The record gives the reactivity of an RNA of 177 nucleotides to 2A3 and DMS. For 2A3, 5,625 sequencing reads were counted.

RNA sequence: GGGAACGACUCGAGUAGAGUCGAAAAGAUAUGGAAGACUAAGGGCGAAGAACGUUCCCUGUAUCGGAAACGAUACAGAACACGGGAGCCUAUGUCUUCCUAAGUCAAGGUCGACUUCGGUCGACAAGAGUGUAAGGGGAUUCGUCCCCUUACACUCAAAAGAAACAACAACAACAAC
Reactivity to 2A3 in 0.01 (KOAc 150mM, MgCl2 10mM, bicine 150mM(pH8.5), 24C), signal-to-noise 3, nucleotides 027 to 126: g000a010u030a020u070g010g000a000a000g010a000c020u060a150a300g060g010g020c040g190a270a000g030a100a040c020g010u030u020c020c000c000u000g010u000a010u000c000g000g040a010a020a020c010g000a000u010a000c000a000g000a010a180c300a010c060g030g010g020a030g010c000c030u020a030u100g000u000c010u000u000c000c000u000a000a000g000u000c060a060a100g240g020u010c000g000a000c000u030u100c300g110g000u000c010g010a010c000a000a040
Reactivity to DMS in 0.01 (KOAc 150mM, MgCl2 10mM, bicine 150mM(pH8.5), 24C), signal-to-noise 3, nucleotides 027 to 126: g020a010u000a070u020g000g000a020a000g010a010c000u010a260a120g010g010g020c010g010a070a140g000a100a240c020g000u000u000c010c030c010u010g020u000a000u000c000g000g000a020a010a040c000g020a020u000a000c000a030g010a010a020c130a010c000g000g000g010a030g010c000c020u010a160u000g000u000c010u010u010c010c000u000a000a050g010u000c020a170a080g010g010u010c010g000a020c000u000u010c200g020g000u000c000g000a010c000a050a050
Source: RMDB library TTRDEL, as collected in RNAgym. For 2A3 the reverse transcriptase was SuperScript II with manganese. The reactions ran in a buffer of 150 mM KOAc, 10 mM MgCl2 and 150 mM bicine (pH 8.5), at 24 C. Reactivities are rounded to 0.1 and cut off at 0 and 3.